[RMDB]
RNA sequence: GGGAACGACUCGAGUAGAGUCGAAAAAGAGCGGUGUAAACAUCAGAGGCUGAGAAGUCUCUUCAGCCGUCAUCGUUGAAUUAUUACUGGUUUAAGAAUACGGCUGAACUUAGACCAGUAGUUGAUAGAUUCAGUUUGUAUUCGUACAGGCUGAAUCAAAAGAAACAACAACAACAAC
Reactivity to DMS in 0.01 (KOAc 150mM, MgCl2 10mM, bicine 150mM(pH8.5), 24C), signal-to-noise 8, nucleotides 027 to 126: a090g000a070g010c010g000g000u000g000u020a080a080a110c180a100u020c000a060g000a020g000g000c000u000g010a170g000a130a040g010u010c010u000c000u010u010c060a060g000c010c010g010u010c050a060u010c060g000u000u010g000a120a090u030u030a030u010u000a010c000u000g000g000u000u000u000a010a010g010a090a090u010a070c070g000g000c030u010g000a080a120c000u000u000a000g000a000c000c000a010g000u000a010g010u000u010g000a090u020a100
Reactivity to 2A3 in 0.01 (KOAc 150mM, MgCl2 10mM, bicine 150mM(pH8.5), 24C), signal-to-noise 9, nucleotides 027 to 126: a010g090a010g010c010g000g000u020g010u050a070a090a020c030a040u110c010a010g000a000g010g000c000u000g010a000g010a070a010g030u010c000u000c000u060u020c020a010g000c010c010g030u020c010a050u030c020g000u010u080g070a090a050u140u040a030u050u030a030c000u000g000g000u000u000u000a000a010g020a060a040u100a100c030g070g020c070u040g020a040a040c000u000u000a000g000a000c000c000a000g000u000a010g000u000u040g040a060u030a100

Source information: This 177-nucleotide RNA was probed chemically with DMS and 2A3. 2A3 adducts were read by reverse transcription with SuperScript II with manganese. Values are in units of 0.01, from 0 to 300, in steps of 10. The RNA was probed in 150 mM KOAc, 10 mM MgCl2 and 150 mM bicine (pH 8.5) at 24 C. For DMS, 36,857 sequencing reads were counted.